Background:
This 207-nucleotide RNA was probed chemically with 2A3 and DMS. For DMS, 11,920 sequencing reads were counted. The 2A3 profile rests on 7,686 reads. The reactions ran in a buffer of 150 mM KOAc, 10 mM MgCl2 and 150 mM bicine (pH 8.5), at 24 C. For 2A3 the reverse transcriptase was SuperScript II with manganese.

RNA sequence: GGGAACGACUCGAGUAGAGUCGAAAAAUGUACUCACCGACUAUCAUGUUGAGGUGGUCUGCCCUCUAGGUACCCUACGCUCUGCCGACUACGACAUCAAUGCUUUCGCGACUCUGACCCGCACCGGAAAAGAUGGAUCUAAACACUACGAGCUGUACAUGAUCUCUUAAUUCGUUAAGAGAUCAUGAAAAGAAACAACAACAACAAC
Reactivity to 2A3 in 0.01 (KOAc 150mM, MgCl2 10mM, bicine 150mM(pH8.5), 24C), signal-to-noise 8, nucleotides 027 to 156: a000u110g030u090a030c020u030c100a030c010c010g060a040c030u080a090u270c110a140u260g040u060u060g070a060g020g020u010g000g010u010c030u050g010c000c030c010u020c040u030a050g080g000u050a080c010c020c020u020a020c040g020c020u020c020u060g020c010c010g060a060c040u090a060c040g090a040c030a060u080c070a070a100u100g020c030u030u080u100c060g010c010g050a040c020u020c030u090g080a090c010c000c020g000c020a030c000c030g060g000a050a040a020a040g070a040u080g040g000a010u000c020u150a060a100a030c070a030c060u130a050c060g040a020g000c040u030g040u040a020
Reactivity to DMS in 0.01 (KOAc 150mM, MgCl2 10mM, bicine 150mM(pH8.5), 24C), signal-to-noise 4, nucleotides 027 to 156: a100u010g020u000a090c050u010c030a180c030c040g010a090c030u010a050u010c030a080u000g030u000u000g020a120g000g020u010g010g000u010c030u000g010c010c000c020u000c070u000a060g020g020u000a060c050c020c020u010a090c080g010c030u000c010u000g000c020c010g020a120c050u000a070c030g000a080c030a070u000c050a060a080u000g000c020u000u000u010c040g020c020g020a070c030u000c030u010g000a120c020c000c030g000c030a100c040c010g000g000a050a070a050a100g000a090u010g010g010a080u000c060u000a060a050a070c040a070c030u000a070c050g010a060g020c010u000g020u000a220